[RMDB]
RNA sequence: GGGAACGACUCGAGUAGAGUCGAAAAGGGAUAAUAUCCGCGUCAAGAACCGAUAUGUUGCAUCACCAGCAGGGCUUGACAAUGCCUUGAAUGUAUGGGGACUCGAUGGGAAUGACAUCAUCCCUGACAACGCUAAGCAUUUCGAUGCUUAGCGUUGAAAAGAAACAACAACAACAAC
Reactivity to 2A3 in 0.01 (KOAc 150mM, MgCl2 10mM, bicine 150mM(pH8.5), 24C), signal-to-noise 2, nucleotides 027 to 126: g050g010g020a010u010a030a060u070a160u110c030c040g150c010g100u000c010a010a040g020a110a100c010c050g020a020u050a030u170g080u040u040g000c070a090u050c040a060c090c000a010g050c010a020g010g000g000c000u010u000g020a050c070a030a030u070g050c040c000u000u070g140a140a010u100g030u060a060u070g030g000g050g000a050c050u010c120g040a050u010g000g060g060a040a140u130g020a050c000a030u020c000a020u020c030c010c000u010g010a030
Reactivity to DMS in 0.01 (KOAc 150mM, MgCl2 10mM, bicine 150mM(pH8.5), 24C), signal-to-noise 4, nucleotides 027 to 126: g010g010g010a010u010a090a070u010a300u000c010c020g000c040g020u010c010a020a040g010a060a190c010c010g010a040u010a030u000g010u000u000g030c110a070u010c120a030c140c090a090g000c010a040g000g000g010c010u000u000g010a110c300a070a080u000g000c000c010u010u000g000a020a030u000g020u000a030u000g000g010g000g000a190c040u010c080g020a010u000g010g010g000a080a090u010g000a130c180a050u010c050a070u010c000c000c010u000g000a100